Structure probing data (DMS) for a 177-nucleotide construct. It was measured as part of the RMDB library OK2TRN.
RNA sequence: GGGAACGACUCGAGUAGAGUCGAAAAAUUUGGCCAACGCCCGCCGUCGCUUUGAACAUCCGGCGAUGCUCUCCGCUGACCGGGCCUUUGCGGCGGUACCGGCGGCGCUGCUGCGUUGGGGCGUAUCCGUAUUUCCCACGUUCGCGUGGGAAAUACGAAAAGAAACAACAACAACAAC
Reactivity to DMS in 0.01 (KOAc 150mM, MgCl2 10mM, bicine 150mM(pH8.5), 24C), signal-to-noise 1, nucleotides 027 to 126: a060u000u020u000g000g020c040c050a050a050c030g020c000c000c020g000c030c020g020u000c000g000c000u000u000u000g010a100a120c220a140u030c020c020g010g020c060g000a170u010g000c010u000c160u000c270c160g000c010u000g000a170c020c020g000g000g030c120c000u000u000u000g020c050g010g030c010g010g010u000a010c130c070g010g020c070g000g000c030g020c100u000g030c130u020g010c020g010u000u010g040g000g000g000c020g020u000a040u010c090

Conditions: 150 mM KOAc, 10 mM MgCl2 and 150 mM bicine (pH 8.5), 24 C.